The record gives the reactivity of an RNA of 207 nucleotides to 2A3 and DMS. Values cover nucleotides 27 to 156. For DMS the reverse transcriptase was MarathonRT. Source: RMDB library ARCHII, as collected in RNAgym. The RNA was probed in 150 mM KOAc, 10 mM MgCl2 and 150 mM bicine (pH 8.5) at 24 C.
RNA sequence: GGGAACGACUCGAGUAGAGUCGAAAAGCAUCAGCUAGAGGGAUCCACCGAUGAGUCCGGUCGCGGGACUCCUCGGGACAACCACAGCGACUGGGAUCGUCAUCUCGGCUAGUUCGCGUGACCGGGAGAUCCGAGCAGAGGCAUAGCGAACUGCGCACAUAAUGCUUGAGUUCGCUCAAGCAUUAUGAAAAGAAACAACAACAACAAC
Reactivity to 2A3 in 0.01 (KOAc 150mM, MgCl2 10mM, bicine 150mM(pH8.5), 24C), signal-to-noise 3, nucleotides 027 to 156: g020c010a060u150c090a030g040c040u110a020g010a080g140g060g040a080u050c040c010a020c020c010g000a010u010g020a000g010u000c020c020g020g000u010c020g000c010g010g000g000a000c000u010c000c000u000c000g010g000g010a020c060a040a070c080c020a010c010a030g010c000g000a010c000u010g000g000g000a000u010c010g010u010c010a010u000c010u000c000g000g000c020u040a090g000u010u000c000g000c000g010u010g010a080c000c000g000g010g000a020g000a010u020c000c010g010a000g000c220a010g030a000g030g000c090a090u170a030g000c000g000a000a000c010u030g050c060g000c000a020
Reactivity to DMS in 0.01 (KOAc 150mM, MgCl2 10mM, bicine 150mM(pH8.5), 24C), signal-to-noise 2, nucleotides 027 to 156: g020c050a040u000c050a090g040c030u000a090g000a120g020g020g010a110u010c010c050a080c010c000g020a030u000g000a040g000u010c000c010g020g010u000c080g000c050g010g010g010a040c020u000c010c030u000c030g030g010g020a080c110a090a160c080c100a300c050a070g000c010g020a050c020u000g010g000g010a060u000c040g010u000c060a100u000c000u000c010g020g030c020u000a070g020u000u000c040g010c050g020u000g000a100c020c000g080g020g020a100g000a030u000c020c030g010a170g000c110a050g010a080g020g000c020a110u020a080g000c030g010a040a050c040u000g000c010g000c080a250